Description: This 207-nucleotide RNA was probed chemically with 2A3.
RNA sequence: GGGAACGACUCGAGUAGAGUCGAAAACAUCUUUCCUCCCUACACAGUGACUCCAGCUUGGGAGGGGCAGGGCUAGGCUGAGCCAGCACUCCCUGUGGUGUCUGCAUGCCACGUGCAGCUCUGGAGUAAAACCUGGAGAAGUUCGCUUCUCCAGGAAGACCUGCUAAAUGUUCGCAUUUAGCAGGUCAAAAGAAACAACAACAACAAC
Reactivity to 2A3 in 0.01 (KOAc 150mM, MgCl2 10mM, bicine 150mM(pH8.5), 24C), signal-to-noise 3, nucleotides 027 to 156: c030a110u060c070u120u150u080c010c010u040c020c000c000u160a150c130a030c020a150g090u070g110a030c000u000c000c000a010g000c010u080u070g010g000g000a020g000g000g010g010c000a010g020g010g000c030u300a050g030g000c010u020g050a050g270c140c040a000g000c030a010c010u030c000c010c020u000g020u020g010g010u020g030u050c000u000g000c000a020u070g200c150c010a110c100g000u010g010c000a000g000c000u020c030u060g010g000a000g010u020a010a030a000a000c000c010u000g000g010a010g000a010a010g030u050u230c220g060c140u000u000c010u000c000c000a000g000g000a000a000

2A3 adducts were read by reverse transcription with SuperScript II with manganese. The 2A3 profile rests on 1,267 reads. It was measured as part of the RMDB library M2RFOK.